[RMDB]
RNA sequence: GGGAACGACUCGAGUAGAGUCGAAAAAGCUGAUAGCCAACGUGACCUACGGAUACACGGCGGCGGGCUUCUCUGGCCGCAUGCCCUGCGCUGAGCUAGCAGACUCCAUCGUCCAGUCUGGGCGCGAGAUGAACUUGUUGUUCGCAACAAGUUCAUCAAAAGAAACAACAACAACAAC
Reactivity to 2A3 in 0.01 (KOAc 150mM, MgCl2 10mM, bicine 150mM(pH8.5), 24C), signal-to-noise 2, nucleotides 027 to 126: a000g040c040u030g040a070u080a020g000c010c010a020a050c050g020u030g080a120c000c050u100a100c180g110g010a050u090a170c050a010c090g000g010c000g010g010c020g010g020g000c010u300u050c080u060c030u050g160g030c010c010g000c040a050u130g020c020c010c050u030g000c020g010c040u020g010a010g020c010u030a010g000c020a000g020a140c040u010c030c020a110u120c030g000u000c010c000a040g090u100c110u120g000g010g000c020g020c040g060a110
Reactivity to DMS in 0.01 (KOAc 150mM, MgCl2 10mM, bicine 150mM(pH8.5), 24C), signal-to-noise 3, nucleotides 027 to 126: a060g020c000u000g020a090u010a060g020c000c010a070a140c000g000u010g000a050c080c030u010a120c210g020g010a110u010a100c060a020c140g000g010c160g000g020c000g010g000g010c110u000u000c120u000c070u000g010g020c000c020g010c050a070u000g000c020c010c040u000g000c030g020c050u000g010a090g020c040u000a050g010c010a040g010a120c030u010c030c020a120u010c030g010u000c010c030a110g020u010c130u010g000g030g000c000g000c220g020a120